[RMDB]
RNA sequence: GGGAACGACUCGAGUAGAGUCGAAAAUUUAACAAGUAUAAGUACUUCUCUGGUGCUAUGGAAACAGCCGCUUAUCGUGAAGCUGCAGCAUGUCAUCUUGCUAAAGCCUUACAAACAUACAGCGAGACAAGCCCAGUCUUCGGACUGGGCAAAAGAAACAACAACAACAAC
Reactivity to DMS in 0.01 (KOAc 150mM, MgCl2 10mM, bicine 150mM(pH8.5), 24C), signal-to-noise 2, nucleotides 027 to 129: u000u000u000a090a150c080a030a050g000u010a040u040a060a090g020u000a040c070u000u000c050u030c060u000g030g010u080g060c040u020a090u020g010g000a100a070a050c070a060g000c110c080g020c140u000u010a040u010c210g040u000g050a050a080g030c030u040g010c000a000g020c050a020u030g040u100c200a160u030c030u000u070g020c040u140a110a190a000g200c050c000u000u030a050c000a040a100a150c170a120u000a020c140a050g000c010g010a000g030a060c000a140a040
Reactivity to 2A3 in 0.01 (KOAc 150mM, MgCl2 10mM, bicine 150mM(pH8.5), 24C), signal-to-noise 3, nucleotides 027 to 129: u080u090u070a140a030c070a060a020g100u050a060u030a150a030g040u020a030c010u020u070c040u000c040u070g000g010u020g020c040u050a030u140g080g000a090a020a000c040a040g020c000c020g030c030u050u080a060u140c090g010u010g070a020a000g000c000u010g000c000a010g010c010a000u040g020u080c020a150u100c120u020u000g000c000u020a070a000a000g000c020c000u050u040a050c020a050a170a000c020a010u060a010c040a010g020c000g010a040g000a030c040a020a020